[RMDB]
RNA sequence: GGGAACGACUCGAGUAGAGUCGAAAACGAAUCUCUUCUUCGGUGGCGAAGGUGAGUGGCUUGGCCACUUGUGGCAAUUUCUCGGCUUUGAUUUCAUUCAAUUCAUGAUCACCACGAACCAACAAAGCAACACCGUCUAGUUCGCUAGACGGUGUUGAAAAGAAACAACAACAACAAC
Reactivity to DMS in 0.01 (KOAc 150mM, MgCl2 10mM, bicine 150mM(pH8.5), 24C), signal-to-noise 2, nucleotides 027 to 126: c100g000a080a060u000c050u010c050u010u000c060u000u000c050g000g000u000g000g020c050g020a050a040g000g020u010g000a090g020u000g000g020c040u000u020g050g020c000c050a010c020u000u010g030u010g010g020c040a050a090u000u000u020c110u000c070g000g020c020u000u000u000g000a060u000u000u010c130a080u030u010c040a040a000u010u020c040a070u000g040a090u000c080a060c020c010a070c040g000a120a090c060c040a050a080c090a100a040a160g010
Reactivity to 2A3 in 0.01 (KOAc 150mM, MgCl2 10mM, bicine 150mM(pH8.5), 24C), signal-to-noise 1, nucleotides 027 to 126: c010g010a030a040u050c010u010c000u180u060c010u130u110c040g020g030u040g050g010c030g030a050a000g060g010u060g010a000g030u070g040g000c050u110u110g110g000c000c000a040c070u090u170g070u020g040g000c010a060a090u000u100u000c080u000c000g020g040c020u080u040u050g030a070u000u260u070c070a070u110u040c000a050a000u060u040c010a020u160g040a110u060c010a020c110c000a010c030g020a010a020c040c000a000a030c010a010a130a010g010